Conditions: 150 mM KOAc, 10 mM MgCl2 and 150 mM bicine (pH 8.5), 24 C. Chemical mapping of a 207-nucleotide RNA with DMS and 2A3. It was measured as part of the RMDB library M2RFPK. Values cover nucleotides 27 to 156. For DMS, 7,084 sequencing reads were counted. For DMS the reverse transcriptase was MarathonRT. 2A3 adducts were read by reverse transcription with SuperScript II with manganese.
RNA sequence: GGGAACGACUCGAGUAGAGUCGAAAAUUCCAUUUGAGUAUCCUGAAAACGGGCUUUUCAGCAUGGAACGUACAUAUUAAAUAGUAGGAGUGCAUAGUGGACCGUAUAGCAGGCAUUAACAUUCCUGAAAACGUGAAAAGGUUCGCCUUUUCACGAACAAACCUAUGAAGUUCGCUUCAUAGGUUUGAAAAGAAACAACAACAACAAC
Reactivity to DMS in 0.01 (KOAc 150mM, MgCl2 10mM, bicine 150mM(pH8.5), 24C), signal-to-noise 3, nucleotides 027 to 156: u000u000c010c000a130u000u000u000g000a110g000u010a070u000c020c000u000g010a050a060a150a120c060g030g030g010c090u010u000u010u000c060a070g020c120a060u000g000g020a040a040c040g020u000a100c070a110u000a130u010u000a060a080a140u000a120g020u000a030g030g010a100g010u000g020c010a070u010a080g040u000g020g010a130c020c020g010u000a090u000a110g030c050a050g010g000c030a080u010u000a100a050c030a080u000u000c000c010u010g000a070a050a060a140c030g020u000g000a020a000a020a010g000g020u000u000c300g030c020c000u000u000u000u000c010a000c010g000a020a090
Reactivity to 2A3 in 0.01 (KOAc 150mM, MgCl2 10mM, bicine 150mM(pH8.5), 24C), signal-to-noise 4, nucleotides 027 to 156: u040u000c000c000a010u100u030u040g050a050g040u080a080u110c000c020u040g050a030a020a040a110c130g020g040g020c060u090u060u060u080c060a020g030c010a030u060g020g040a090a020c020g110u190a040c010a030u230a070u120u270a080a110a160u130a050g130u030a010g010g050a030g010u020g000c040a030u050a090g030u020g030g090a090c010c020g050u090a050u070a180g090c070a030g030g000c000a000u010u010a030a020c000a030u030u050c000c000u000g040a040a060a030a020c000g000u000g000a000a000a000a000g010g010u040u050c170g120c000c000u000u000u010u000c000a000c000g000a010a010